Structure probing data (2A3 and DMS) for a 177-nucleotide construct. For 2A3 the reverse transcriptase was SuperScript II with manganese. The data come from the RNA Mapping Database (RMDB), library M2PK50. For DMS the reverse transcriptase was MarathonRT. The RNA was probed in 150 mM KOAc, 10 mM MgCl2 and 150 mM bicine (pH 8.5) at 24 C.
[RMDB]
RNA sequence: GGGAACGACUCGAGUAGAGUCGAAAAGUUUCCGGGUUCGCCCGGAAACAAAGUGUGUGUGAAAAAGACAGAGAGAAAAACACACACACAAACUCUCUCUCAAAAGAGAAGUCUUCGGACUUCUCAAGAUGAUCUAAAAGUUCGCUUUUAGAUCAUCAAAAGAAACAACAACAACAAC
Reactivity to 2A3 in 0.01 (KOAc 150mM, MgCl2 10mM, bicine 150mM(pH8.5), 24C), signal-to-noise 3, nucleotides 027 to 126: g000u010u010u000c000c020g000g010g000u040u040c110g070c070c010c050g020g000a000a010a000c000a000a010a010g000u010g000u000g000u000g020u020g100a220a060a030a080a040g100a040c150a120g130a030g020a020g070a110a050a000a120a000c020a000c000a000c000a010c000a000c010a010a160a110c040u050c020u000c000u000c010u010c030a050a070a070a040g000a000g000a000a000g010u000c000u020u090c240g060g000a010c000u000u000c000u000c000a000a020
Reactivity to DMS in 0.01 (KOAc 150mM, MgCl2 10mM, bicine 150mM(pH8.5), 24C), signal-to-noise 2, nucleotides 027 to 126: g000u000u000u000c000c010g020g000g020u000u010c220g010c000c010c000g020g000a000a010a000c020a090a090a070g010u000g010u000g010u000g010u020g000a050a080a070a100a120g010a100c140a080g010a050g000a060g000a060a080a080a130a120c000a000c000a010c010a000c000a000c040a050a050a070c070u000c060u000c010u010c010u000c050a080a070a180a160g000a000g010a010a010g000u010c000u000u030c180g030g010a020c000u020u000c000u010c010a060a060